[RMDB]
RNA sequence: GGGAACGACUCGAGUAGAGUCGAAAAGAUAUGGAUGAUCCUCCCCACCCAGUUAUCUUAGAACUACAACCGACAUCGGAAACGAUGUUAAAGUUGCUAAGAUAACUGGAGGGAUCAUCCUAAGUCACGAUCUAUAAUAGUUCGCUAUUAUAGAUCGAAAAGAAACAACAACAACAAC
Reactivity to 2A3 in 0.01 (KOAc 150mM, MgCl2 10mM, bicine 150mM(pH8.5), 24C), signal-to-noise 6, nucleotides 027 to 126: g160a130u300a190u300g000g000a000u010g000a000u010c000c010u070c110c030c000c010a020c000c000c000a000g000u010u000a000u010c000u000u020a010g010a070a100c120u200a080c280a090a010c080c090g020a010c000a000u000c000g020g000a060a040a030c020g000a000u000g000u010u040a040a040a000g000u010u040g090c000u000a000a010g000a010u000a000a010c000u000g010g000a000g010g000g000a000u000c000a000u000c000c000u010a070a030g260u160c110a010
Reactivity to DMS in 0.01 (KOAc 150mM, MgCl2 10mM, bicine 150mM(pH8.5), 24C), signal-to-noise 7, nucleotides 027 to 126: g010a130u000a180u000g010g010a000u000g000a020u000c010c010u000c160c010c010c050a300c110c010c000a010g010u000u000a000u000c010u000u000a000g000a130a030c120u010a300c100a050a060c150c190g000a020c010a000u000c000g000g000a110a060a200c000g000a000u000g010u000u000a040a100a120g000u000u000g010c000u000a010a010g010a010u000a000a000c010u000g000g000a060g020g010g000a010u000c000a010u000c000c000u000a010a090g000u010c120a160